Source: RMDB library OK2TST, as collected in RNAgym. This 177-nucleotide RNA was probed chemically with DMS and 2A3. Reactivities are given for positions 27 through 126. The RNA was probed in 150 mM KOAc, 10 mM MgCl2 and 150 mM bicine (pH 8.5) at 24 C. For 2A3, 7,483 sequencing reads were counted. For DMS the reverse transcriptase was MarathonRT.
[RMDB]
RNA sequence: GGGAACGACUCGAGUAGAGUCGAAAACAGAAUUUUCAUUGACGAUUUACAUUCUCUCUGAAUUGUCUUCAACUGAAGAAGGUUAAGAGGAUUAACUCUUAGGAAUGAUCAAUGAACAUUCCGACAACAUUACCUCACGAUUCGUCGUGAGGUAAUGAAAAGAAACAACAACAACAAC
Reactivity to DMS in 0.01 (KOAc 150mM, MgCl2 10mM, bicine 150mM(pH8.5), 24C), signal-to-noise 5, nucleotides 027 to 126: c100a120g020a030a010u000u000u000u000c000a010u000u000g000a040c170g000a120u010u010u020a300c060a030u000u000c020u000c020u010c060u000g010a010a030u000u020g010u000c030u000u000c000a150a110c140u000g000a080a080g010a080a070g010g010u000u000a090a080g000a030g000g010a070u000u010a030a040c080u000c020u000u000a030g010g010a020a020u000g010a180u000c010a020a020u010g010a020a010c040a030u000u000c000c050g010a090c120a050a110
Reactivity to 2A3 in 0.01 (KOAc 150mM, MgCl2 10mM, bicine 150mM(pH8.5), 24C), signal-to-noise 5, nucleotides 027 to 126: c020a020g030a020a020u010u020u000u030c000a000u020u020g020a020c060g100a090u090u080u230a070c040a020u020u010c140u000c000u000c020u050g050a080a090u040u050g030u020c000u020u010c030a230a230c060u140g050a110a050g080a080a050g200g020u060u080a090a040g010a000g020g000a010u070u100a050a030c010u020c010u060u040a020g020g060a020a020u030g050a070u020c010a010a030u010g000a010a000c000a000u010u000c010c020g070a040c030a110a010